The record gives the reactivity of an RNA of 177 nucleotides to DMS and 2A3. 2A3 is a SHAPE reagent: it acylates the 2'-hydroxyl of flexible nucleotides of all four kinds. DMS adducts were read by reverse transcription with MarathonRT. Values cover nucleotides 27 to 126. For 2A3, 1,166 sequencing reads were counted.
RNA sequence: GGGAACGACUCGAGUAGAGUCGAAAAAGACAGCCAGGAGGUUUGCCUAGAAGCAGCCACCCUUGAAAGAGUGCGUAAUAGCUCACUGAUCGAGCGCUCUUGCGCCGAAGAUGAACGGGGCUAAGCGGGUAGAACAAACUUUCGAGUUUGUUCUACCAAAAGAAACAACAACAACAAC
Reactivity to DMS in 0.01 (KOAc 150mM, MgCl2 10mM, bicine 150mM(pH8.5), 24C), signal-to-noise 3, nucleotides 027 to 126: a110g000a030c070a080g000c060c020a120g010g000a130g020g010u000u010u010g020c020c020u010a110g010a150a150g010c010a090g020c000c010a090c070c010c010u010u010g010a080a090a130g020a030g000u010g010c040g000u010a090a070u000a060g000c010u000c030a050c040u000g010a210u000c030g000a090g000c020g000c010u010c110u000u000g010c030g020c010c040g010a060a090g010a110u000g000a100a050c190g000g000g000g000c020u020a060a100g010c120g020
Reactivity to 2A3 in 0.01 (KOAc 150mM, MgCl2 10mM, bicine 150mM(pH8.5), 24C), signal-to-noise 1, nucleotides 027 to 126: a000g030a050c010a000g020c020c010a010g050g000a030g020g010u150u260u210g000c010c000u160a130g060a190a010g010c020a000g010c010c000a060c060c000c010u040u090g000a110a000a000g110a030g030u190g000c030g020u080a000a170u090a190g020c000u010c030a050c060u060g020a100u030c080g050a070g060c010g010c000u100c010u130u210g010c000g000c000c030g060a050a020g060a060u130g000a040a050c050g000g010g020g000c020u020a000a040g040c120g050